[RMDB]
RNA sequence: GGGAACGACUCGAGUAGAGUCGAAAAGCACGUCCGGAAAGGCCCGUGCGAACACUUGAGCUCCGGCUUGGCCGCUCUUGUGGAUUAGGACGUUCUAGCUCCGGCUUGGCCGCUAGUUCGUCCGAAACGGUCAUCACGCUUUCGAGCGUGAUGACCGAAAAGAAACAACAACAACAAC
Reactivity to 2A3 in 0.01 (KOAc 150mM, MgCl2 10mM, bicine 150mM(pH8.5), 24C), signal-to-noise 2, nucleotides 027 to 126: g070c000a000c000g070u030c020c010g010g170a290a130a070g070g010c050c120c010g020u010g010c020g050a040a000c010a000c000u020u040g000a010g010c100u030c010c100g150g000c080u140u270g170g000c000c000g070c000u010c000u010u000g080u030g000g010a120u050u160a020g000g000a010c000g000u000u020c000u000a020g060c010u020c020c040g120g100c100u160u160g210g010c000c000g000c000u000a000g000u000u000c000g000u000c000c000g000a000a010a020

Conditions: 150 mM KOAc, 10 mM MgCl2 and 150 mM bicine (pH 8.5), 24 C. Structure probing data (2A3) for a 177-nucleotide construct. It was measured as part of the RMDB library OK1LIB.